[RMDB]
RNA sequence: GGGAACGACUCGAGUAGAGUCGAAAAGAUAUGGACCAGCAUGGGAGAUGUACGUCGGAAACGACGUAUACAUCAUCGAUCAUGGCUGGUCCUAAGUCAAACUCAAUACCCUUCGGGGUAUUGAGAAGCCAAUAGAUACCUUCGGGUAUCUAUUGGCAAAAGAAACAACAACAACAAC
Reactivity to 2A3 in 0.01 (KOAc 150mM, MgCl2 10mM, bicine 150mM(pH8.5), 24C), signal-to-noise 1, nucleotides 027 to 126: g000a000u020a020u100g000g000a000c000c010a000g000c000a000u000g030g020g040a110g000a010u000g020u020a000c010g000u000c000g040g000a000a020a010c010g010a000c010g020u030a020u040a000c000a030u010c000a030u300c020g030a020u010c030a000u030g250g030c020u010g010g000u000c000c010u000a000a010g000u000c010a040a010a040c010u000c020a000a000u000a010c000c000c000u000u080c300g100g000g030g000u000a000u010u000g000a000g000a010a010
Reactivity to DMS in 0.01 (KOAc 150mM, MgCl2 10mM, bicine 150mM(pH8.5), 24C), signal-to-noise 2, nucleotides 027 to 126: g010a010u000a040u010g000g020a020c020c000a010g010c000a040u000g000g010g000a060g000a030u000g020u010a000c010g010u000c000g020g000a010a010a040c010g000a030c000g010u000a040u010a110c150a000u000c000a300u000c260g010a080u010c000a000u000g000g020c000u000g000g000u000c000c000u000a000a030g000u000c000a150a110a160c000u000c010a000a010u000a010c020c000c000u000u020c290g060g020g020g010u000a000u000u000g010a000g000a050a080
Chemical mapping of a 177-nucleotide RNA with 2A3 and DMS. For 2A3 the reverse transcriptase was SuperScript II with manganese. The reactions ran in a buffer of 150 mM KOAc, 10 mM MgCl2 and 150 mM bicine (pH 8.5), at 24 C. For DMS the reverse transcriptase was MarathonRT. It was measured as part of the RMDB library TTRDES.